[RMDB]
Structure probing data (2A3) for a 207-nucleotide construct. The RNA was probed in 150 mM KOAc, 10 mM MgCl2 and 150 mM bicine (pH 8.5) at 24 C. Reactivities are given for positions 27 through 156. For 2A3 the reverse transcriptase was SuperScript II with manganese. It was measured as part of the RMDB library VIROID.

RNA sequence: GGGAACGACUCGAGUAGAGUCGAAAACCUUCUUCGACUCGGACCGGCUCAUCUCGACAAGAGGCGGCAGUCCUCAGUGCUCUUACUCUUUUCUGUAAAGAGGAGACUGCUGGACUCGCCGCCCAAGUUCGAGCAUGAGCCACGUUCCGAGCGAAGACCACUACAGGGCGUUCGCGCCCUGUAGUGGAAAAGAAACAACAACAACAAC
Reactivity to 2A3 in 0.01 (KOAc 150mM, MgCl2 10mM, bicine 150mM(pH8.5), 24C), signal-to-noise 1, nucleotides 027 to 156: c000c000u000u010c040u010u000c000g170a140c000u010c000g070g000a010c020c060g020g000c000u000c000a000u030c000u000c000g000a000c020a130a060g120a250g040g020c020g000g000c010a000g030u040c040c000u000c000a120g060u210g300c000u030c020u120u210a240c000u070c020u060u040u190u110c250u260g300u300a060a030a000g010a010g010g010a000g010a000c000u040g050c070u010g000g000a010c010u060c130g000c000c000g010c000c000c000a000a000g000u070u020c020g000a000g000c100a010u000g000a000g020c000c000a000c000g010u030u030c000c000g000a000g000c000g000a000a000g000a000